[RMDB]
RNA sequence: GGGAACGACUCGAGUAGAGUCGAAAAGCGAUCCGUAAGGCGCUCUCAAAGUUUUGCUGCUUCAUGAAGUGGCUUGGUCAGGAGUGCACCUGCUUCCUUCAGCCUGCAGAAGGCGCCGUCGGCGACCUCCGUUCCGGGUAUUCGUACCCGGAACGGAAAAAGAAACAACAACAACAAC
Reactivity to DMS in 0.01 (KOAc 150mM, MgCl2 10mM, bicine 150mM(pH8.5), 24C), signal-to-noise 1, nucleotides 027 to 126: g000c060g010a120u000c000c010g060u000a130a150g010g010c000g120c010u000c000u000c050a050a200a300g000u000u010u010u000g000c030u000g010c020u010u010c140a170u030g000a030a010g040u000g010g010c000u000u000g010g000u010c190a110g030g000a080g010u000g010c110a180c090c150u050g010c000u000u000c300c000u000u000c110a140g000c130c040u000g000c060a170g000a020a050g010g010c030g050c000c010g010u000c010g010g010c020g010a190c090c020